About this RNA: The record gives the reactivity of an RNA of 177 nucleotides to 2A3. 2A3 adducts were read by reverse transcription with SuperScript II with manganese. Values are in units of 0.01, from 0 to 300, in steps of 10. The RNA was probed in 150 mM KOAc, 10 mM MgCl2 and 150 mM bicine (pH 8.5) at 24 C. The 2A3 profile rests on 1,381 reads.
RNA sequence: GGGAACGACUCGAGUAGAGUCGAAAACAUACGUGACAUGAGAGAAGGACCUCCACCUUCAAUAGCAUAGGAGGCAUGCUAACUGAUGAACUCGUGCACGACCACCGGAGACACGGCACUCUGUCAAGCGUGGUACGAGCUUCGGCUCGUGCCACGCAAAAGAAACAACAACAACAAC
Reactivity to 2A3 in 0.01 (KOAc 150mM, MgCl2 10mM, bicine 150mM(pH8.5), 24C), signal-to-noise 3, nucleotides 027 to 126: c020a040u190a040c030g030u030g090a120c000a010u140g010a070g030a000g010a070a060g030g180a240c000c000u030c000c060a110c000c010u040u090c020a050a080u120a040g000c040a050u050a110g000g000a020g000g040c020a040u090g030c010u130a170a150c020u090g070a060u070g000a110a010c000u010c000g030u040g010c000a010c030g040a020c030c000a060c000c080g010g020a030g000a020c100a010c130g000g000c020a010c050u000c010u010g020u040c050a090a130